[RMDB]
RNA sequence: GGGAACGACUCGAGUAGAGUCGAAAAGCACACCCUACCACACGAAGCUAACUUUUUUUCUAAUUUUUAUUUUUACAGAAGUGGGGUUUCACUGUCAUGCCCAGGCUUGUCCUCCCAAACUUUCGCCUCCUGUCACUGGGAUUACAGGUGUGAACAAGGCAUAUAAAUCAUUCGUGAUUUAUAUGCCAAAAGAAACAACAACAACAAC
Reactivity to DMS in 0.01 (KOAc 150mM, MgCl2 10mM, bicine 150mM(pH8.5), 24C), signal-to-noise 1, nucleotides 027 to 156: g030c040a140c020a110c030c000c000u000a030c030c030a070c040a060c070g010a200a150g020c030u010a160a120c020u000u000u000u000u000u000u010c060u030a060a100u020u020u030u020u030a090u080u040u050u010u020a290c010a140g010a060a060g040u000g020g030g020g010u000u010u000c020a090c010u000g020u010c040a070u000g030c000c000c000a100g010g010c020u000u010g010u010c010c040u010c010c010c030a030a070a060c070u000u000u000c100g020c000c020u000c010c030u020g030u000c090a100c010u010g000g050g000a120u000u000a040c020a000g000g010u000g030u010g000a040a140c070a100a290
Reactivity to 2A3 in 0.01 (KOAc 150mM, MgCl2 10mM, bicine 150mM(pH8.5), 24C), signal-to-noise 2, nucleotides 027 to 156: g090c020a040c000a010c060c010c000u030a030c020c000a040c000a010c090g070a050a020g040c020u020a070a050c030u000u090u100u030u030u110u100c070u060a160a190u100u070u150u090u130a270u090u080u040u110u110a140c050a070g060a130a010g080u080g000g020g090g000u000u080u100c030a030c020u020g030u100c010a040u070g090c010c000c010a000g010g000c010u070u120g010u080c000c030u070c010c010c030a050a100a040c070u030u070u120c020g000c020c000u040c010c000u020g010u010c000a000c060u060g020g000g000a010u010u010a000c000a010g030g000u010g000u020g000a060a000c030a050a070